[RMDB]
RNA sequence: GGGAACGACUCGAGUAGAGUCGAAAACGCCGCGCGGCCAUGGUUCGUCAGCCUUGUCGCCGCAGCCGCCACCCAUGUCUUCGUACCGGGCGCAUGGUAUGUCGCCAGUGGCGCAAUUUCCGGCCUACCGUAAUAGCCCAUUCGUGGGCUAUUACGGAAAAGAAACAACAACAACAAC
Reactivity to DMS in 0.01 (KOAc 150mM, MgCl2 10mM, bicine 150mM(pH8.5), 24C), signal-to-noise 2, nucleotides 027 to 126: c120g000c030c100g030c060g000c010g000g020c020c040a050u010g000g030u000u000c230g020u000c180a120g010c030c020u000u020g000u020c180g010c010c020g030c020a060g020c070c060g020c040c060a020c190c040c030a100u000g020u010c030u010u010c090g010u000a010c080c070g010g000g000c120g000c060a060u000g010g030u000a080u000g000u010c130g010c020c090a050g010u000g050g000c020g010c030a100a120u010u010u010c040c010g000g000c040c070u000a080
Reactivity to 2A3 in 0.01 (KOAc 150mM, MgCl2 10mM, bicine 150mM(pH8.5), 24C), signal-to-noise 1, nucleotides 027 to 126: c040g010c000c020g040c020g010c000g000g040c020c000a020u050g000g060u160u130c090g130u150c160a000g000c000c020u010u140g060u050c070g000c000c010g040c000a000g000c000c010g010c030c000a040c010c040c010a050u090g090u000c060u070u090c120g040u020a090c020c020g060g060g000c080g010c080a030u020g000g040u070a090u160g210u110c040g010c080c000a280g160u100g100g000c010g000c000a030a110u120u010u090c010c000g000g000c000c000u030a080